An RNA of 170 nucleotides, treated with DMS and 2A3 and read out base by base.
2A3 adducts were read by reverse transcription with SuperScript II with manganese.
Source: RMDB library 15KLIB, as collected in RNAgym.
For 2A3, 41,225 sequencing reads were counted.
The DMS profile rests on 27,942 reads.
DMS adducts were read by reverse transcription with MarathonRT.

RNA sequence: GGGAACGACUCGAGUAGAGUCGAAAAGGGGACGACAACUCUGGGGAGAAAAGGGAGGAUCGGAUGGGAAGAGUAUAUCCUACGGGAAUCCCCCGGUCCCUCUCACGUCCAGCCCCUCCCCGUGUCUCAACUAAAGUCUUCGGACUUUAGAAAAGAAACAACAACAACAAC
Reactivity to DMS in 0.01 (KOAc 150mM, MgCl2 10mM, bicine 150mM(pH8.5), 24C), signal-to-noise 7, nucleotides 027 to 129: g030g020g020g020a090c160g000a110c110a060a080c140u000c090u000g040g000g050g010a060g010a080a120a140a000g010g020g010a070g000g010a030u020c040g010g030a140u090g040g040g040a000a070g030a160g020u060a070u000a110u090c140c050u040a040c160g000g000g000a090a100u020c060c020c030c040c030g000g000u050c030c030c020u010c000u020c050a170c050g010u030c030c040a110g030c000c010c000c000u000c000c000c000c000g040u050g020u040c030u070c040a050a250
Reactivity to 2A3 in 0.01 (KOAc 150mM, MgCl2 10mM, bicine 150mM(pH8.5), 24C), signal-to-noise 9, nucleotides 027 to 129: g010g010g000g000a020c060g040a030c070a150a050c060u040c070u150g050g010g070g010a080g050a030a120a040a030g030g010g010a080g010g010a010u000c000g010g030a100u190g070g000g020a040a050g090a040g200u090a070u020a050u170c020c000u030a060c180g050g000g030a020a060u020c000c000c000c000c000g000g020u040c050c030c010u000c000u000c000a050c020g090u020c020c000a020g010c020c000c000c000u030c000c000c000c000g020u050g050u010c030u000c010a030a160
Values cover nucleotides 27 to 129. As a SHAPE reagent, 2A3 marks flexible, mostly unpaired nucleotides at the ribose 2'-OH.